Structure probing data (DMS and 2A3) for a 207-nucleotide construct.

RNA sequence: GGGAACGACUCGAGUAGAGUCGAAAAACAAGCUCCUUAACCUCACUGCACCUCAAUUUCCUCAUCUGUAAAGUGGGAAUAAUAAUAGAAGCUACCUCAUAGGAGAUUGCGAGGAUUCGACAUGUUAAUGUGGGGAAAGUGUGAACUUGUGGCAAGGUAGUACUUAUCCCUUCGGGGAUAAGUACUAAAAAGAAACAACAACAACAAC
Reactivity to DMS in 0.01 (KOAc 150mM, MgCl2 10mM, bicine 150mM(pH8.5), 24C), signal-to-noise 1, nucleotides 027 to 156: a030c010a020a050g020c010u000c000c010u000u000a140a280c060c010u000c010a080c050u000g000c050a190c040c030u010c000a080a170u000u010u000c030c010u000c040a050u000c060u000g040u000a070a030a060g010u010g010g030g020a050a100u010a030a140u000a080a170u010a040g010a110a090g010c000u010a100c020c010u000c010a140u000a070g040g020a080g000a040u000u010g010c020g060a040g030g020a170u000u000c070g020a120c070a050u030g010u000u000a080a070u010g040u010g000g000g000g000a060a020a100g010u000g030u010g020a050a000c020u000u000g020u000g030g030c020a060a070g030g020
Reactivity to 2A3 in 0.01 (KOAc 150mM, MgCl2 10mM, bicine 150mM(pH8.5), 24C), signal-to-noise 4, nucleotides 027 to 156: a000c030a010a000g010c000u040c050c000u070u030a130a140c000c000u010c010a010c010u040g010c010a040c010c000u010c050a020a060u020u020u030c010c000u060c040a180u110c060u100g200u260a140a130a060g030u130g000g010g050a060a020u130a090a020u090a050a030u090a060g140a130a000g020c030u060a050c010c010u050c010a050u140a080g000g030a000g000a030u020u090g040c070g030a010g000g000a020u130u170c050g050a030c030a040u060g100u080u100a120a040u130g000u040g010g020g000g000a010a020a030g180u190g010u000g030a040a100c030u010u020g010u010g020g010c030a040a000g100g000
Record summary: Conditions: 150 mM KOAc, 10 mM MgCl2 and 150 mM bicine (pH 8.5), 24 C. 2A3 adducts were read by reverse transcription with SuperScript II with manganese. For 2A3, 1,642 sequencing reads were counted.